[RMDB]
RNA sequence: GGGAACGACUCGAGUAGAGUCGAAAAAAGUUUCGCAUGAUACCGUCGGUCCAGUUCUCCUGCGUCGAUGGCGUGUCCGUUCUGAGCCUACAGUCGACAACGGCAUCUCCCUGACGGGAGGUGGUCGUAGUUGAUGAUUAAUCCGGGACCGCGUGAGCAUCCGUAUUCGCUUCGGCGAAUACGGAUGAAAAGAAACAACAACAACAAC
Reactivity to 2A3 in 0.01 (KOAc 150mM, MgCl2 10mM, bicine 150mM(pH8.5), 24C), signal-to-noise 1, nucleotides 027 to 156: a000a010g050u040u030u010c060g000c030a040u210g000a100u180a070c020c000g020u040c000g020g030u060c030c030a080g000u040u070c130u040c060c030u010g060c060g060u050c020g060a030u100g010g000c030g000u090g000u020c050c020g030u050u060c060u060g170a030g040c020c080u080a050c150a000g010u020c000g000a010c000a020a000c000g030g000c000a000u000c010u000c020c000c020u130g170a060c120g020g010g010a000g020g000u030g070g090u040c000g000u000a090g000u000u020g010a010u020g010a030u050u100a030a030u070c020c060g000g040g010a000c010c020g020c050g030u000g020a000g060
The record gives the reactivity of an RNA of 207 nucleotides to 2A3. The RNA was probed in 150 mM KOAc, 10 mM MgCl2 and 150 mM bicine (pH 8.5) at 24 C. Reactivities are given for positions 27 through 156.